[RMDB]
RNA sequence: GGGAACGACUCGAGUAGAGUCGAAAAGAUAUGGACCGAUGUGGACUUGGAUUUAACAUCGGUCGGAAACGACCGAGUGUUUGUCAGUCCGCAUCGGUCCUAAGUCAAAGACACUCUUCGGAGUGUCCAAUUGUAAGAUCUUCGGAUCUUACAAUUGAAAAGAAACAACAACAACAAC
Reactivity to 2A3 in 0.01 (KOAc 150mM, MgCl2 10mM, bicine 150mM(pH8.5), 24C), signal-to-noise 6, nucleotides 027 to 126: g020a010u100a050u160g010g000a000c010c000g000a000u000g020u020g010g020a000c020u140u300g260g030a060u300u300u230a020a000c000a010u020c010g000g000u000c000g000g000a050a060a010c010g010a000c010c010g040a120g260u130g020u020u020u030g020u020c000a000g010u000c000c000g000c000a000u000c000g000g000u000c000c010u000a000a000g010u010c000a000a030a000g010a000c000a000c010u010c000u080u160c300g140g000a000g010u010g000u000c000
Reactivity to DMS in 0.01 (KOAc 150mM, MgCl2 10mM, bicine 150mM(pH8.5), 24C), signal-to-noise 9, nucleotides 027 to 126: g000a060u000a300u010g000g000a010c000c000g010a010u000g030u000g000g000a020c000u000u010g030g010a030u000u010u000a010a000c000a080u000c000g010g010u000c000g010g000a100a120a200c010g010a010c000c000g000a040g020u000g010u000u000u000g010u000c010a030g000u000c000c000g010c000a000u000c000g000g000u000c000c000u000a010a060g010u000c060a110a140a190g000a010c000a000c000u000c000u000u010c230g020g000a020g010u000g000u000c000
Structure probing data (2A3 and DMS) for a 177-nucleotide construct. The DMS profile rests on 32,416 reads. For 2A3 the reverse transcriptase was SuperScript II with manganese. DMS adducts were read by reverse transcription with MarathonRT. Conditions: 150 mM KOAc, 10 mM MgCl2 and 150 mM bicine (pH 8.5), 24 C. Source: RMDB library TTRDES, as collected in RNAgym.